[RMDB]
Record summary
Conditions: 150 mM KOAc, 10 mM MgCl2 and 150 mM bicine (pH 8.5), 24 C. Structure probing data (DMS and 2A3) for a 207-nucleotide construct. In probing experiments dimethyl sulfate is read out at A N1 and C N3, which are open when not base-paired.
RNA sequence: GGGAACGACUCGAGUAGAGUCGAAAAUUAAAAAGAGUCUUAACAGGUUAGCUGGUUCAUACUAGCCCUGUUAUAUGGCGUUUUGAACUAGUGAAGUUUAAGUAAUAUAACUAUGAUCGUAGAGGUUAAUGACGAGAUGCGUUUGGACAGGGGUUCACUAAUAGUCUCCGUUCGCGGAGACUAUUAGAAAAGAAACAACAACAACAAC
Reactivity to DMS in 0.01 (KOAc 150mM, MgCl2 10mM, bicine 150mM(pH8.5), 24C), signal-to-noise 1, nucleotides 027 to 156: u000u010a030a050a030a070a090g020a120g010u000c010u000u010a060a020c040a060g040g000u020u010a150g010c030u000g000g010u000u000c140a120u010a060c030u000a040g070c000c010c060u000g000u000u000a030u010a030u000g040g020c000g030u010u000u000u020g000a060a030c030u000a080g020u010g010a040a120g020u000u010u000a080a150g010u010a050a110u030a090u000a020a070c030u000a070u000g010a050u010c110g010u010a080g020a100g030g010u010u010a030a070u010g000a050c040g020a090g000a050u000g000c030g010u000u000u010g040g000a040c030a090g000g030g030g010u000u000c040a160
Reactivity to 2A3 in 0.01 (KOAc 150mM, MgCl2 10mM, bicine 150mM(pH8.5), 24C), signal-to-noise 2, nucleotides 027 to 156: u050u020a000a000a040a030a000g030a040g020u040c010u020u010a010a010c010a020g000g060u140u160a020g020c010u030g010g010u140u180c010a040u160a280c030u020a050g010c000c000c000u000g010u040u020a000u000a000u020g000g020c010g010u090u040u050u080g020a020a010c000u030a020g030u020g130a090a010g020u100u090u170a070a010g000u090a030a120u040a020u010a180a000c010u010a110u190g070a040u070c010g030u060a020g000a030g040g090u120u120a080a020u130g010a040c000g000a010g000a050u020g010c000g060u030u030u060g010g000a010c000a030g010g000g000g010u010u040c010a010